RNA sequence: GGGAACGACUCGAGUAGAGUCGAAAAACAGUACCAGCUGCUUCGGCAGCUGGUACUGAACUUUCAUGGAGUUAAGAAACCACGUAAACAAAGCGGAACCGAAAAGCUAAACGAGUAGGAAGAAUAAAUAGGUACCACCACUUCGGUGGUGGUACAACAUAUGUCACAUCUUCGGAUGUGACAUAUGAAAAGAAACAACAACAACAAC
Reactivity to DMS in 0.01 (KOAc 150mM, MgCl2 10mM, bicine 150mM(pH8.5), 24C), signal-to-noise 2, nucleotides 027 to 156: a190c000a040g020u020a010c000c030a020g040c010u010g020c020u000u010c290g060g030c020a000g060c000u000g020g000u020a000c000u000g000a020a040c050u000u010u010c030a040u000g010g020a230g000u000u010a040a190g000a200a130a130c010c010a020c040g000u020a080a080a110c060a090a060a080g010c000g000g040a070a090c060c020g000a060a020a070a100g010c050u000a040a090a070c060g010a120g000u000a080g000g000a080a120g010a070a120u010a010a020a130u000a120g010g020u000a020c010c000a020c020c000a000c000u000u000c300g040g010u010g010g040u000g000g030u000a000c000a020a060
Reactivity to 2A3 in 0.01 (KOAc 150mM, MgCl2 10mM, bicine 150mM(pH8.5), 24C), signal-to-noise 2, nucleotides 027 to 156: a010c000a000g000u000a010c010c000a010g010c010u020g020c010u050u090c230g110g000c000a010g020c000u000g000g000u000a000c000u000g000a000a000c000u020u080u060c020a030u100g070g030a030g060u140u120a100a040g070a090a100a030c020c010a030c070g020u100a040a140a090c090a100a100a020g020c010g010g020a080a120c000c000g000a010a030a000a000g020c060u150a020a100a160c010g000a010g010u010a010g100g040a040a050g060a080a070u190a160a060a040u140a130g110g000u000a000c000c000a000c000c000a000c020u030u050c220g070g000u000g000g000u000g000g000u000a000c000a000a000

Overview:
This 207-nucleotide RNA was probed chemically with DMS and 2A3. It was measured as part of the RMDB library M2RFPK. For DMS the reverse transcriptase was MarathonRT. The reactions ran in a buffer of 150 mM KOAc, 10 mM MgCl2 and 150 mM bicine (pH 8.5), at 24 C. For 2A3, 2,510 sequencing reads were counted.